The data come from the RNA Mapping Database (RMDB), library TTRDEL.
An RNA of 177 nucleotides, treated with 2A3 and DMS and read out base by base.
For DMS the reverse transcriptase was MarathonRT.
For 2A3, 3,148 sequencing reads were counted.
RNA sequence: GGGAACGACUCGAGUAGAGUCGAAAAGAUAUGGAGUUGUUUCUUUUGACGGCUUGAGGGUCGGAAACGACCCAAGAUGAGGCCGAUAAGAAACACCUCCUAAGUCAAAUCCGAGUUCGCUCGGAAAGUACUGUCUAAGGUUCGCCUUAGACAGUACAAAAGAAACAACAACAACAAC
Reactivity to 2A3 in 0.01 (KOAc 150mM, MgCl2 10mM, bicine 150mM(pH8.5), 24C), signal-to-noise 2, nucleotides 027 to 126: g020a010u060a040u200g000g000a000g010u010u000g000u030u030u000c000u040u070u060u200g290a130c040g000g030c030u020u060g010a080g000g020g000u010c020g020g010a070a080a020c010g000a020c010c000c020a000a010g130a050u190g280a040g170g000c010c000g060a110u060a120a010g000a000a000a000c000a000c010c000u010c010c000u000a060a020g010u000c000a010a160a170u010c010c000g000a000g010u020u130c250g040c110u000c000g000g000a030a080a000
Reactivity to DMS in 0.01 (KOAc 150mM, MgCl2 10mM, bicine 150mM(pH8.5), 24C), signal-to-noise 2, nucleotides 027 to 126: g010a020u000a300u020g000g000a090g000u010u000g000u000u000u000c000u000u000u020u010g000a220c040g010g010c000u000u000g030a280g010g030g030u010c000g010g000a040a090a180c010g000a020c000c000c000a000a050g000a260u010g000a120g010g000c000c000g030a130u010a010a000g000a020a040a020c010a010c070c000u020c000c020u000a000a060g000u000c030a130a100a180u000c000c010g010a020g000u000u010c300g000c000u000c000g000g000a010a020a110